[RMDB]
RNA sequence: GGGAACGACUCGAGUAGAGUCGAAAAACAUCUGGAAAACUUGAAAAGCAAGGUUUCAUAAAUGGAUGUAGACCACACUAAUUAUGUGAGCUGAAGGAAUUAGAGGAAAAGGUUCAAUCAGUUUGGCAGGGUUAACCUGGGACAGCUUUUCAGAGGCCAAUACGAUCCACUUCGGUGGAUCGUAUUGAAAAGAAACAACAACAACAAC
Reactivity to 2A3 in 0.01 (KOAc 150mM, MgCl2 10mM, bicine 150mM(pH8.5), 24C), signal-to-noise 3, nucleotides 027 to 156: a000c020a000u030c030u050g020g020a030a060a030a080c000u000u050g060a120a090a060a050g130c040a030a040g040g030u030u050u040c070a100u130a190a080a060u190g060g020a020u020g010u010a010g060a040c030c000a040c010a020c060u140a190a060u250u080a080u240g060u040g040a040g030c010u020g020a050a040g010g010a050a090u080u070a110g040a120g100g050a040a050a020a000g020g020u020u040c030a020a080u030c010a040g010u020u100u130g070g000c040a020g040g000g030u060u110a030a050c000c010u020g010g010g030a010c030a020g000c000u070u060u020u070c070a050g020a050g080g010c040
Reactivity to DMS in 0.01 (KOAc 150mM, MgCl2 10mM, bicine 150mM(pH8.5), 24C), signal-to-noise 1, nucleotides 027 to 156: a060c010a040u030c010u020g020g010a070a050a040a060c000u030u000g030a140a150a040a230g020c040a020a020g020g010u000u000u000c020a120u010a100a100a110u020g010g010a060u000g000u000a060g010a040c000c030a070c040a040c080u000a070a060u000u000a010u000g000u000g020a080g000c000u000g010a060a080g010g000a030a030u000u000a120g010a090g000g000a020a030a100a070g000g020u010u010c090a040a060u000c020a050g010u000u010u000g010g040c070a140g020g000g000u010u010a070a080c030c060u000g040g020g030a110c030a060g000c000u020u000u000u000c060a070g010a000g000g000c140
This 207-nucleotide RNA was probed chemically with 2A3 and DMS. For 2A3 the reverse transcriptase was SuperScript II with manganese. The RNA was probed in 150 mM KOAc, 10 mM MgCl2 and 150 mM bicine (pH 8.5) at 24 C. For DMS the reverse transcriptase was MarathonRT. For 2A3, 1,706 sequencing reads were counted.